[RMDB]
The data come from the RNA Mapping Database (RMDB), library OK2TST.
An RNA of 177 nucleotides, treated with 2A3 and DMS and read out base by base.
The DMS profile rests on 2,157 reads.
Reactivities are rounded to 0.1 and cut off at 0 and 3.
The RNA was probed in 150 mM KOAc, 10 mM MgCl2 and 150 mM bicine (pH 8.5) at 24 C.
For DMS the reverse transcriptase was MarathonRT.
RNA sequence: GGGAACGACUCGAGUAGAGUCGAAAAUCAUGGUUUCCUGGAAUCCAGCGAAACGGUGCACCGAGAUCAGCGAUAUUACUGGAAAAUAUUUCGUAGGCUUCCGGGGUGGCGUCCUGGGCAAUGUCGCCUCACAAUGCGUAUUCGUACGCAUUGUGAGAAAAGAAACAACAACAACAAC
Reactivity to 2A3 in 0.01 (KOAc 150mM, MgCl2 10mM, bicine 150mM(pH8.5), 24C), signal-to-noise 2, nucleotides 027 to 126: u090c010a030u100g050g040u020u070u090c010c010u040g030g040a070a080u100c030c010a020g010c070g050a010a000a040c060g050g010u070g020c050a030c010c040g020a030g030a160u090c040a060g080c020g050a040u020a070u090u080a090c050u120g070g070a040a090a060a060u140a140u040u110u080c070g050u050a080g060g060c040u090u000c030c030g020g000g020g000u050g010g030c040g020u050c000c040u060g030g010g000c030a040a020u090g030u070c040g020c030
Reactivity to DMS in 0.01 (KOAc 150mM, MgCl2 10mM, bicine 150mM(pH8.5), 24C), signal-to-noise 2, nucleotides 027 to 126: u000c070a090u010g010g020u000u010u010c000c020u000g010g030a150a150u000c010c030a190g000c120g020a060a080a070c050g030g000u000g010c100a160c050c010g010a120g000a050u000c050a090g010c040g000a060u000a050u010u010a050c080u020g000g000a090a060a120a080u010a070u000u000u000c030g030u000a130g040g000c110u010u000c020c010g000g010g000g000u010g000g000c060g000u000c030c020u010g000g000g000c050a080a040u000g010u000c050g000c090